[RMDB]
RNA sequence: GGGAACGACUCGAGUAGAGUCGAAAACUUAAACAAGGUUCGCCUUGUUUAAGAAAAAGAUAUGGAUUGUGGUGGGAGAGGUCAUUCGGAAACGAAUGGCCUCGAAGAACACCCAAUCCUAAGUCAAAAAACUUGAGAUGGUUCGCCAUCUCAAGAAUCGAUAUAGUAAGUUCGCUUACUAUAUCGAAAAAGAAACAACAACAACAAC
Reactivity to DMS in 0.01 (KOAc 150mM, MgCl2 10mM, bicine 150mM(pH8.5), 24C), signal-to-noise 2, nucleotides 027 to 156: c010u000u010a020a020a030c000a040a030g000g040u000u000c300g030c010c000u000u000g000u000u000u010a010a030g010a040a020a140a160a190g000a060u000a170u020g000g000a000u000u000g020u010g040g010u030g000g060g010a140g050a050g000g040u010c000a000u000u000c000g050g030a090a060a140c010g000a020a030u010g010g020c000c000u000c000g000a020a100g010a160a300c010a010c000c030c020a000a000u010c000c030u010a000a100g000u000c010a000a130a110a130a160a080c010u000u000g000a030g030a040u010g010g000u010u000c300g030c050c000a030u000c000u000c010a000a000g000a050a070
Reactivity to 2A3 in 0.01 (KOAc 150mM, MgCl2 10mM, bicine 150mM(pH8.5), 24C), signal-to-noise 2, nucleotides 027 to 156: c000u000u000a000a010a000c000a000a000g020g040u020u090c160g150c020c000u000u020g000u010u000u000a010a000g000a020a030a000a000a000g000a000u020a010u020g000g000a010u010u020g070u150g050g020u000g030g030g020a120g000a000g030g000u010c000a000u010u000c000g000g000a010a020a000c010g000a000a000u000g000g000c000c000u000c010g000a020a000g000a000a000c000a000c000c000c000a000a000u000c000c000u000a000a000g000u000c010a030a030a040a160a050a090c010u000u010g000a000g000a000u000g000g060u050u060c150g020c060c010a000u010c000u000c000a000a000g000a000a050
The record gives the reactivity of an RNA of 207 nucleotides to DMS and 2A3. For 2A3 the reverse transcriptase was SuperScript II with manganese. High 2A3 reactivity points to a flexible backbone, as in loops and unpaired stretches. The RNA was probed in 150 mM KOAc, 10 mM MgCl2 and 150 mM bicine (pH 8.5) at 24 C.